[RMDB]
RNA sequence: GGGAACGACUCGAGUAGAGUCGAAAAGAUAUGGAGCUUGAACUACUUUGCAGGAGGAAGUCGGAAACGACUUCUACCCACCCUGAAAGCAAGCUCCUAAGUCAAAACGCGAGCUUCGGCUCGCGAACGUCAACUACUAGUUCGCUAGUAGUUGACGAAAAGAAACAACAACAACAAC
Reactivity to 2A3 in 0.01 (KOAc 150mM, MgCl2 10mM, bicine 150mM(pH8.5), 24C), signal-to-noise 2, nucleotides 027 to 126: g030a000u080a070u200g010g000a000g000c020u010u010g020a100a080c080u260a080c070u300u180u300g200c070a010g000g000a030g020g000a000a000g020u010c010g000g010a050a010a010c010g000a000c000u020u030c000u030a030c000c040c010a070c040c010c020u040g100a020a010a000g110c010a010a000g000c000u030c000c000u000a040a010g020u010c050a020a050a080a090c030g020c000g000a000g000c010u080u300c300g080g010c000u010c000g000c010g000a010a000
Reactivity to DMS in 0.01 (KOAc 150mM, MgCl2 10mM, bicine 150mM(pH8.5), 24C), signal-to-noise 2, nucleotides 027 to 126: g000a070u000a300u020g010g020a030g000c000u000u000g000a070a060c120u010a300c110u010u000u000g020c010a030g000g020a250g010g000a010a000g040u000c010g020g000a030a080a200c010g010a010c000u000u000c000u000a050c040c080c160a300c170c020c000u000g020a040a060a050g090c020a000a010g000c010u000c020c000u020a000a070g000u000c040a060a030a100a120c020g030c010g000a010g000c000u000u000c260g000g000c000u000c000g020c000g010a010a070
The data come from the RNA Mapping Database (RMDB), library TTRDEL. An RNA of 177 nucleotides, treated with 2A3 and DMS and read out base by base. 2A3 adducts were read by reverse transcription with SuperScript II with manganese. Conditions: 150 mM KOAc, 10 mM MgCl2 and 150 mM bicine (pH 8.5), 24 C. For DMS, 1,434 sequencing reads were counted.